[RMDB]
RNA sequence: GGGAACGACUCGAGUAGAGUCGAAAAGGUUUAAUGCUAAUCGUGAUAGGGGUUUAGUGCUGAUGAACACCUAUGCUGUUAGCAUUAAUCUAAAAUCGGUAUAGAAGUCUUCGGACUUCUAUACCGACUGAAGAGUCAUGUUCGCAUGACUCUUCAGAAAAGAAACAACAACAACAAC
Reactivity to 2A3 in 0.01 (KOAc 150mM, MgCl2 10mM, bicine 150mM(pH8.5), 24C), signal-to-noise 3, nucleotides 027 to 126: g060g020u030u030u080a000a010u000g010c000u000a000a020u050c020g030u070g300a020u020a010g000g020g040g020u000u040u040a240g070u210g210c180u170g080a180u070g010a010a000c000a010c000c000u000a000u010g000c000u010g000u000u000a000g000c000a000u000u010a000a000u000c000u010a030a020a000a090u020c000g000g000u010a010u010a010g010a010a010g000u000c000u090u100c280g030g000a000c000u000u000c000u010a000u000a000c000c000g000a000
Reactivity to DMS in 0.01 (KOAc 150mM, MgCl2 10mM, bicine 150mM(pH8.5), 24C), signal-to-noise 2, nucleotides 027 to 126: g020g010u010u000u000a000a000u000g010c000u000a010a010u000c300g000u010g010a030u000a020g000g010g010g000u000u000u000a050g030u010g020c280u000g000a120u000g000a010a010c000a010c000c000u010a010u000g010c010u000g020u000u000a000g000c000a000u000u010a020a000u010c000u000a060a050a090a210u000c000g010g010u000a000u000a000g000a010a020g010u000c000u010u010c200g020g010a010c000u000u000c000u000a000u000a000c000c010g010a010

The data come from the RNA Mapping Database (RMDB), library RFMREP. An RNA of 177 nucleotides, treated with 2A3 and DMS and read out base by base. DMS adducts were read by reverse transcription with MarathonRT. The RNA was probed in 150 mM KOAc, 10 mM MgCl2 and 150 mM bicine (pH 8.5) at 24 C. For 2A3 the reverse transcriptase was SuperScript II with manganese.